Record summary: Structure probing data (DMS and 2A3) for a 177-nucleotide construct. It was measured as part of the RMDB library TTRDES. The 2A3 profile rests on 3,649 reads.

RNA sequence: GGGAACGACUCGAGUAGAGUCGAAAAGAUAUGGACUGGUAGAGCAACAGCCAUGGAUCGGAAACGAUCCUGUGGACAUGCUCAAACAGUCCUAAGUCAAACAACUGUUGACUUCGGUCAACAGUUGGGAUCAAGACUGGUUCGCCAGUCUUGAUCCAAAAGAAACAACAACAACAAC
Reactivity to DMS in 0.01 (KOAc 150mM, MgCl2 10mM, bicine 150mM(pH8.5), 24C), signal-to-noise 1, nucleotides 027 to 126: g000a010u000a130u000g000g000a020c010u010g020g000u000a270g000a030g030c020a080a050c210a130g030c000c000a060u020g000g020a020u020c010g010g010a030a040a040c000g020a010u000c000c010u000g030u010g000g030a020c110a300u000g030c000u000c000a080a210a270c010a010g010u000c000c000u000a020a070g000u000c000a160a120a300c020a000a000c000u000g000u000u000g000a000c020u000u020c300g000g000u000c000a010a000c000a000g000u000u010g000
Reactivity to 2A3 in 0.01 (KOAc 150mM, MgCl2 10mM, bicine 150mM(pH8.5), 24C), signal-to-noise 2, nucleotides 027 to 126: g000a010u030a010u040g010g000a000c000u020g050g090u170a090g010a010g020c200a140a200c100a260g000c000c000a010u000g000g000a010u010c000g010g000a030a020a000c000g000a020u010c000c020u010g030u030g000g000a020c090a300u300g040c000u000c000a050a010a000c000a000g000u040c000c000u020a000a000g000u000c040a080a030a090c010a000a000c010u000g010u030u000g010a010c000u000u090c300g140g000u000c000a000a000c000a010g000u000u000g000